[RMDB]
RNA sequence: GGGAACGACUCGAGUAGAGUCGAAAAAGAUUCAAUAACGCUAAGGUGUGACAGCAAUGAGGCAUGCCUCUGCUUGUAAACAUGCGUUAAAAAGAGGGGAAAUGUCAGUGAAUACCUGAGGCAGCGCGCCGAGCGAAUUAUUCGUAAUUCGCUCGGCAAAAGAAACAACAACAACAAC
Reactivity to DMS in 0.01 (KOAc 150mM, MgCl2 10mM, bicine 150mM(pH8.5), 24C), signal-to-noise 2, nucleotides 027 to 126: a020g000a090u020u020c050a050a110u010a140a180c060g000c010u030a180a110g000g030u000g010u000g000a070c110a130g000c040a060a160u040g000a080g050g030c010a020u010g000c020c020u000c000u000g010c030u000u070g000u000a030a010a020c050a070u000g000c090g000u000u000a020a050a060a080a060g000a020g000g020g000g020a000a070a000u000g000u000c070a070g020u000g010a210a010u000a030c100c000u010g010a120g010g030c060a100g020c130g000c240
Reactivity to 2A3 in 0.01 (KOAc 150mM, MgCl2 10mM, bicine 150mM(pH8.5), 24C), signal-to-noise 3, nucleotides 027 to 126: a000g100a030u140u100c050a060a090u050a080a000c000g010c060u040a020a100g130g020u060g000u000g050a000c010a020g010c040a080a120u250g040a050g010g010c110a110u130g140c000c000u000c000u030g110c000u180u160g110u020a100a060a000c000a010u170g060c040g000u000u000a080a020a010a000a000g080a020g000g040g030g000a060a130a040u090g000u050c000a050g030u000g150a060a020u120a140c030c020u050g000a010g070g010c000a030g030c020g000c010
The record gives the reactivity of an RNA of 177 nucleotides to DMS and 2A3.
It was measured as part of the RMDB library OK1LIB.
Values cover nucleotides 27 to 126.
For 2A3 the reverse transcriptase was SuperScript II with manganese.
Conditions: 150 mM KOAc, 10 mM MgCl2 and 150 mM bicine (pH 8.5), 24 C.